Conditions: 150 mM KOAc, 10 mM MgCl2 and 150 mM bicine (pH 8.5), 24 C. This 177-nucleotide RNA was probed chemically with 2A3 and DMS.
[RMDB]
RNA sequence: GGGAACGACUCGAGUAGAGUCGAAAAACAAAAGAGGAGGUGAAUGUCAGUCACACGCCUUAUGACUUGUGCGACCCACUGCCUCGUCACGGUAAUUUAGAGAUUGCUGUGCUCACCUCGCAGAAGACGCCUGACUAUUAUUCGUAAUAGUCAGGCGAAAAGAAACAACAACAACAAC
Reactivity to 2A3 in 0.01 (KOAc 150mM, MgCl2 10mM, bicine 150mM(pH8.5), 24C), signal-to-noise 7, nucleotides 027 to 126: a000c070a010a060a020a030g080a050g100g010a010g030g010u020g040a120a070u160g070u150c030a010g010u130c010a060c010a010c130g040c010c010u200u210a160u140g040a070c010u050u020g030u110g080c010g020a110c020c040c000a060c070u070g010c000c010u010c020g030u030c000a010c020g010g020u050a070a050u080u090u210a140g030a030g030a100u050u050g010c010u000g000u020g010c010u010c000a040c000c010u020c010g010c040a020g040a110a010g080a020
Reactivity to DMS in 0.01 (KOAc 150mM, MgCl2 10mM, bicine 150mM(pH8.5), 24C), signal-to-noise 2, nucleotides 027 to 126: a160c070a030a040a080a080g010a080g000g020a090g010g020u000g010a070a110u030g000u010c060a070g010u010c060a100c100a090c060g000c010c020u010u000a100u040g010a030c010u000u000g020u020g000c130g010a100c040c080c080a100c050u020g000c020c020u010c050g000u000c040a020c070g000g010u000a020a020u030u000u050a140g020a180g010a050u020u000g060c000u030g010u000g000c080u000c010a050c020c010u000c040g000c100a060g000a060a120g000a180
It was measured as part of the RMDB library OK1LIB. For 2A3 the reverse transcriptase was SuperScript II with manganese. For 2A3, 5,752 sequencing reads were counted. The DMS profile rests on 3,482 reads.